[RMDB]
RNA sequence: GGGAACGACUCGAGUAGAGUCGAAAAAGCAACAAGUUAGGCAGCUUGUGAAAUACCUACAACAUAGCCAGUAACACAGAAUAGGAGAGAAUACAGGUUUGGGGCUCUUACAAGCUUAGUGGGCUGGACACAGCGAAAUCUUCGGAUUUCGCUGUGUAAAAGAAACAACAACAACAAC
Reactivity to DMS in 0.01 (KOAc 150mM, MgCl2 10mM, bicine 150mM(pH8.5), 24C), signal-to-noise 1, nucleotides 027 to 126: a040g030c150a190a010c030a000a010g020u010u000a040g020g030c090a110g000c020u000u000g000u000g000a130a080a050u010a150c010c010u010a070c080a060a050c190a110u000a080g010c040c020a080g000u020a060a060c030a070c040a100g000a070a100u000a090g010g000a020g010a050g000a070a080u010a080c130a120g010g010u010u000u020g030g000g020g050c070u000c020u000u010a070c060a060a070g000c100u000u010a060g000u010g010g020g000c020u000g010g000
An RNA of 177 nucleotides, treated with DMS and read out base by base. DMS (dimethyl sulfate) methylates the pairing face of unpaired adenines and cytosines. Values cover nucleotides 27 to 126. The reactions ran in a buffer of 150 mM KOAc, 10 mM MgCl2 and 150 mM bicine (pH 8.5), at 24 C.